This 207-nucleotide RNA was probed chemically with 2A3 and DMS. The 2A3 profile rests on 3,175 reads. The RNA was probed in 150 mM KOAc, 10 mM MgCl2 and 150 mM bicine (pH 8.5) at 24 C. 2A3 adducts were read by reverse transcription with SuperScript II with manganese. It was measured as part of the RMDB library OK3TST. The DMS profile rests on 3,815 reads.

RNA sequence: GGGAACGACUCGAGUAGAGUCGAAAAGGAGCUCGGGAUGCUCUAAAUCCUAGGAAGAGCAUCCGUACGCUCUUCCUUACCACCAGAGCGUAUUGAUGUGUUGGUGGUUUUGAGACACAUCAGUGAGGGCUCAAAAGGACAUUGCUCUUACCGAGCAGACGACUAUUAGUUUCGACUAAUAGUCGUCAAAAGAAACAACAACAACAAC
Reactivity to 2A3 in 0.01 (KOAc 150mM, MgCl2 10mM, bicine 150mM(pH8.5), 24C), signal-to-noise 4, nucleotides 027 to 156: g050g010a030g030c030u050c120g050g030g010a010u030g010c000u000c010u010a130a120a020u070c050c070u060a070g010g070a030a020g010a000g010c010a020u060c060c040g030u040a020c040g000c000u010c000u000u020c010c000u010u020a060c010c030a030c010c030a020g010a000g010c030g020u040a040u030u050g020a020u010g040u000g020u020u020g040g090u100g090g020u110u020u140u100g030a020g000a000c010a000c000a010u020c000a010g000u010g110a090g000g090g010c010u020c000a070a110a010a000g050g010a020c030a100u080u110g000c000u020c000u040u100a120c050c070g000a000g000c020a010
Reactivity to DMS in 0.01 (KOAc 150mM, MgCl2 10mM, bicine 150mM(pH8.5), 24C), signal-to-noise 2, nucleotides 027 to 156: g020g030a100g040c000u010c000g060g000g000a040u000g020c010u000c020u010a080a050a160u020c070c040u000a100g010g030a140a040g000a020g060c000a060u000c040c120g040u000a030c120g000c080u000c000u000u030c000c030u000u000a080c050c030a130c060c030a170g000a010g000c000g000u010a030u000u000g010a030u000g000u010g000u000u000g060g020u010g010g010u000u000u050u000g010a260g000a070c010a050c020a020u020c020a030g020u000g010a070g020g000g000c010u000c010a040a050a150a130g020g000a100c090a190u010u000g010c000u000c030u000u000a130c120c090g000a100g010c040a130